[RMDB]
RNA sequence: GGGAACGACUCGAGUAGAGUCGAAAAUUACUGAAGAACAGUUUAAAACAGUAUAUGGCGUGAACGUUGCAGGUGUGCUAUGGGGUAUUCAAGCCGCACAUGAACAAUUUAAAAAAUUCAAUCAUGGGGAUAUCAACCUAUUCGUAGGUUGAUAUCCAAAAGAAACAACAACAACAAC
Reactivity to DMS in 0.01 (KOAc 150mM, MgCl2 10mM, bicine 150mM(pH8.5), 24C), signal-to-noise 2, nucleotides 027 to 126: u030u000a010c020u000g010a120a070g000a110a100c050a030g010u060u000u030a060a100a060a170c040a070g010u000a020u040a060u020g000g000c040g020u000g020a040a050c050g000u010u000g020c060a050g000g020u010g010u030g010c090u020a080u020g000g000g030g000u010a080u000u070c100a070a060g000c030c040g010c150a060c070a020u000g000a090a130c300a000a030u000u010u040a000a030a070a020a020a080u000u000c110a040a050u060c010a000u000g000g060
Reactivity to 2A3 in 0.01 (KOAc 150mM, MgCl2 10mM, bicine 150mM(pH8.5), 24C), signal-to-noise 3, nucleotides 027 to 126: u130u020a020c000u010g050a100a040g020a220a080c060a070g000u040u080u160a110a180a050a030c010a010g120u020a100u040a120u230g010g000c060g010u040g100a100a020c090g040u140u070g020c010a040g040g100u070g000u010g010c000u050a100u210g000g000g040g020u060a080u010u100c050a060a010g040c000c000g100c010a020c000a040u000g000a000a000c110a140a060u030u190u300a080a110a040a010a000a010u060u090c070a040a040u000c010a030u060g090g130